[RMDB]
An RNA of 177 nucleotides, treated with DMS and 2A3 and read out base by base. Values cover nucleotides 27 to 126. The RNA was probed in 150 mM KOAc, 10 mM MgCl2 and 150 mM bicine (pH 8.5) at 24 C. For 2A3, 30,632 sequencing reads were counted.
RNA sequence: GGGAACGACUCGAGUAGAGUCGAAAAGAUAUGGAUUCGUAAGGCGCAUAGGGACUGCUUAUUCGGAAACGAAUAAGGCCUAUGAACUACGCUGAAGAAUCCUAAGUCAAACCCGACUUCGGUCGGGGAUCUAAAUUGAGUUCGCUCAAUUUAGAUCAAAAGAAACAACAACAACAAC
Reactivity to DMS in 0.01 (KOAc 150mM, MgCl2 10mM, bicine 150mM(pH8.5), 24C), signal-to-noise 9, nucleotides 027 to 126: g010a050u000a300u000g010g010a010u000u000c000g010u020a210a300g000g000c010g000c010a030u000a020g000g010g010a120c230u020g010c020u000u000a010u000u010c000g010g010a130a080a230c010g000a020a000u000a000a010g000g020c010c000u000a020u000g000a120a100c160u010a280c020g010c000u000g010a120a300g000a010a010u000c000c010u000a040a110g010u000c030a060a120a300c000c000c000g010a010c000u000u020c170g020g000u000c000g010g000g010
Reactivity to 2A3 in 0.01 (KOAc 150mM, MgCl2 10mM, bicine 150mM(pH8.5), 24C), signal-to-noise 8, nucleotides 027 to 126: g040a010u090a040u160g000g010a000u020u010c020g020u090a050a060g020g000c010g000c030a000u010a010g080g010g110a190c140u280g020c000u270u000a000u010u010c010g030g040a080a070a070c010g000a000a000u010a010a000g020g040c010c000u010a000u010g000a010a010c080u190a040c110g000c060u080g020a060a080g000a000a000u000c000c000u010a080a020g030u010c040a080a060a140c000c000c000g000a000c000u080u090c300g100g000u010c000g000g020g020